[RMDB]
RNA sequence: GGGAACGACUCGAGUAGAGUCGAAAAAUGGGCGGGACAAUGGGACCCGACCCCGAAAGGGGAAGGGAAUCCCCUAAACCCGCCCUCAGUUCGGAUCGCGGGCUGCAACUCGCCCGCGUGAAGCUGGCCGGUUACAAUCAUUCGUGAUUGUAACCGGAAAAGAAACAACAACAACAAC
Reactivity to DMS in 0.01 (KOAc 150mM, MgCl2 10mM, bicine 150mM(pH8.5), 24C), signal-to-noise 1, nucleotides 027 to 126: a000u030g000g010g010c030g000g000g060a020c130a110a170u100g000g010g010a080c000c000c000g030a300c000c020c000c000g000a040a110a240g040g020g000g000a000a290g000g000g000a160a060u000c070c030c000c070u030a010a050a010c000c000c000g010c000c000c030u020c000a000g010u000u000c040g000g000a090u000c000g030c010g000g010g000c000u000g010c130a220a050c210u000c150g010c000c000c000g000c010g000u000g000a260a110g000c050u000g000g050
Reactivity to 2A3 in 0.01 (KOAc 150mM, MgCl2 10mM, bicine 150mM(pH8.5), 24C), signal-to-noise 2, nucleotides 027 to 126: a000u050g020g000g000c020g000g000g000a020c070a070a100u080g010g030g040a040c010c000c000g000a010c010c010c010c000g070a030a040a020g010g000g000g010a000a000g030g010g020a000a150u060c000c010c000c000u050a150a070a000c000c000c000g000c000c000c000u000c000a000g000u100u210c000g030g000a020u010c000g000c000g000g010g010c020u110g070c110a110a060c040u030c120g000c000c000c010g000c000g000u000g000a000a000g000c000u000g020g020